Annotation
An RNA of 177 nucleotides, treated with DMS and 2A3 and read out base by base. The data come from the RNA Mapping Database (RMDB), library OK2TST. For 2A3, 18,694 sequencing reads were counted. The RNA was probed in 150 mM KOAc, 10 mM MgCl2 and 150 mM bicine (pH 8.5) at 24 C. For DMS the reverse transcriptase was MarathonRT.
RNA sequence: GGGAACGACUCGAGUAGAGUCGAAAAGUGCCCAGUGACAGUGGACUUGGGGGCACACAACCCAGUGAAACACAAGCUGGAGUGGCUAAAGGAGUGACGGUAUCACCCCUCUCCUAACCCCAGACUCACACUUGCUUAAAUUCGUUUAAGCAAGUGUAAAAGAAACAACAACAACAAC
Reactivity to DMS in 0.01 (KOAc 150mM, MgCl2 10mM, bicine 150mM(pH8.5), 24C), signal-to-noise 9, nucleotides 027 to 126: g010u000g000c000c010c010a100g000u010g010a120c190a110g020u000g000g010a130c090u000u000g030g020g010g000g000c100a080c080a070c110a070a160c070c000c010a060g000u010g010a170a110a100c130a060c150a120a280g010c010u000g000g010a070g010u000g010g000c110u010a060a130a030g010g000a020g010u000g000a060c120g010g000u000a300u010c130a060c030c000c020c020u000c020u000c010c010u010a090a190c050c010c000c020a090g000a120c150u000c120
Reactivity to 2A3 in 0.01 (KOAc 150mM, MgCl2 10mM, bicine 150mM(pH8.5), 24C), signal-to-noise 8, nucleotides 027 to 126: g080u060g030c010c000c010a010g030u040g060a070c060a090g050u050g030g070a050c030u060u080g020g000g000g010g070c100a020c000a000c020a160a090c010c010c000a020g020u040g080a100a180a010c070a010c020a110a000g000c000u010g010g020a110g050u040g050g010c070u110a180a070a040g000g010a010g010u030g030a060c090g030g020u100a190u260c030a100c020c000c000c000u000c000u000c010c000u030a100a120c010c000c000c010a020g030a070c020u040c030